[RMDB]
RNA sequence: GGGAACGACUCGAGUAGAGUCGAAAACAUGUCUUUGUUACCGCCUUUACCAAUGCCAGCGAUUUUGCCAUCUUUAAUACCAAUAUCCGCUUUAUAAAUACCGGUGUAAUCCACGAUUAAAGCGUUAGUUCUUCAUGAAGUUCGCUUCAUGAAGAACAAAAGAAACAACAACAACAAC
Reactivity to DMS in 0.01 (KOAc 150mM, MgCl2 10mM, bicine 150mM(pH8.5), 24C), signal-to-noise 2, nucleotides 027 to 126: c050a060u000g010u000c030u010u010u010g000u000u000a130c070c060g000c060c020u000u010u000a100c040c050a070a100u010g000c040c020a040g000c100g020a060u000u000u020u020g020c050c010a100u000c050u000u000u000a070a050u000a170c060c060a060a140u000a100u010c120c010g010c030u000u000u000a040u000a050a110a100u000a090c130c070g020g030u000g030u000a080a090u000c120c000a050c100g000a100u000u000a030a020a030g020c020g010u000u000a090
Reactivity to 2A3 in 0.01 (KOAc 150mM, MgCl2 10mM, bicine 150mM(pH8.5), 24C), signal-to-noise 2, nucleotides 027 to 126: c030a060u060g060u070c040u000u170u110g080u070u070a070c020c010g050c010c040u060u090u040a040c010c030a030a020u030g000c000c010a010g010c040g060a090u020u050u020u050g020c000c000a010u020c050u050u100u060a110a040u080a060c020c000a060a030u020a070u140c060c000g040c030u000u040u020a150u030a070a180a040u110a090c030c050g100g040u040g030u030a020a050u000c040c020a030c030g020a010u050u070a000a050a000g010c010g000u000u020a030